Conditions: 150 mM KOAc, 10 mM MgCl2 and 150 mM bicine (pH 8.5), 24 C. Chemical mapping of a 207-nucleotide RNA with 2A3 and DMS.

[RMDB]
RNA sequence: GGGAACGACUCGAGUAGAGUCGAAAAACUUCUUCCACCCUGAGGCGUAUGUUCUCGGUCUUUGUGGGAAGAAACAAAUCACAAAAGCAAUUAAGAGAGCUCAAACAAUGGGGUUUAUGCCAGUUACAUACAAGGAUCCUGCAUAUUUCAGGGACCACAUUAUAGUGGACUUCGGUCCACUAUAAUGAAAAGAAACAACAACAACAAC
Reactivity to 2A3 in 0.01 (KOAc 150mM, MgCl2 10mM, bicine 150mM(pH8.5), 24C), signal-to-noise 6, nucleotides 027 to 156: a000c010u040u020c000u070u000c010c010a030c020c010c040u050g010a010g050g000c030g050u150a100u290g060u160u050c030u020c030g030g010u030c070u050u090u100g030u030g040g040g030a030a050g000a030a020a000c050a020a070a020u150c050a020c020a080a080a030a000g040c030a020a070u080u060a170a030g030a010g010a010g040c010u060c110a050a060a050c030a050a100u070g020g000g030g010u030u070u030a020u020g020c010c000a010g010u080u060a030c020a030u090a030c050a050a030g040g010a050u040c000c010u030g020c040a070u060a120u140u130u100c030a030g010g000g030a010c000c010a010
Reactivity to DMS in 0.01 (KOAc 150mM, MgCl2 10mM, bicine 150mM(pH8.5), 24C), signal-to-noise 3, nucleotides 027 to 156: a080c070u010u010c050u010u000c030c020a180c030c100c010u010g000a070g020g040c060g030u000a050u000g010u000u000c010u000c040g030g000u000c020u000u010u000g030u000g030g030g010a100a030g000a080a070a220c070a050a090a090u000c050a060c040a040a120a050a060g020c030a070a110u000u010a070a100g010a140g010a120g000c030u000c070a070a080a100c060a050a170u010g000g010g020g030u010u000u000a030u010g010c010c010a160g000u000u010a040c020a080u010a020c070a030a040g020g000a100u000c000c030u000g040c060a080u000a080u000u010u000c060a070g010g000g010a120c030c030a100

For 2A3, 4,555 sequencing reads were counted. Source: RMDB library OK3TST, as collected in RNAgym. 2A3 adducts were read by reverse transcription with SuperScript II with manganese. For DMS the reverse transcriptase was MarathonRT.